Description
This 177-nucleotide RNA was probed chemically with 2A3 and DMS. DMS adducts were read by reverse transcription with MarathonRT. For DMS, 2,876 sequencing reads were counted. The reactions ran in a buffer of 150 mM KOAc, 10 mM MgCl2 and 150 mM bicine (pH 8.5), at 24 C. For 2A3, 620 sequencing reads were counted.

RNA sequence: GGGAACGACUCGAGUAGAGUCGAAAAUUCAAGAUAAAGUAAGAUCACUACAAGAGAUGUAUGUCAAUAUCAAAAAUGAUGGAUGGAAUUUACUUGAUGUAGUUGAGGUAAUUCGUAAUAUUUAUACUACAGUCGUGAAAUUCGUUUCACGACUGUAAAAAGAAACAACAACAACAAC
Reactivity to 2A3 in 0.01 (KOAc 150mM, MgCl2 10mM, bicine 150mM(pH8.5), 24C), signal-to-noise 2, nucleotides 027 to 126: u010u000c040a140a030g210a260u110a100a000a070g090u070a050a000g030a180u050c050a000c020u050a030c000a080a000g080a000g050a080u140g150u120a030u040g190u140c050a030a030u080a060u110c090a000a030a230a020a080u200g000a030u000g040g050a000u000g000g090a020a020u170u030u000a140c020u090u090g080a080u090g050u050a070g080u040u130g150a110g080g000u110a120a090u030u030c000g000u000a180a000u000a090u120u100u030a050u050a070c000
Reactivity to DMS in 0.01 (KOAc 150mM, MgCl2 10mM, bicine 150mM(pH8.5), 24C), signal-to-noise 2, nucleotides 027 to 126: u020u040c000a040a040g010a090u020a000a020a160g000u000a070a200g020a040u000c030a080c090u010a020c070a030a170g020a130g030a050u030g000u020a050u020g030u050c120a050a120u020a030u000c080a000a090a060a060a130u010g000a060u000g010g020a070u020g000g010a040a050u010u010u000a010c010u000u000g000a100u000g010u010a060g000u010u000g020a030g000g010u000a020a030u010u000c040g000u000a040a030u040a050u020u000u020a060u010a030c130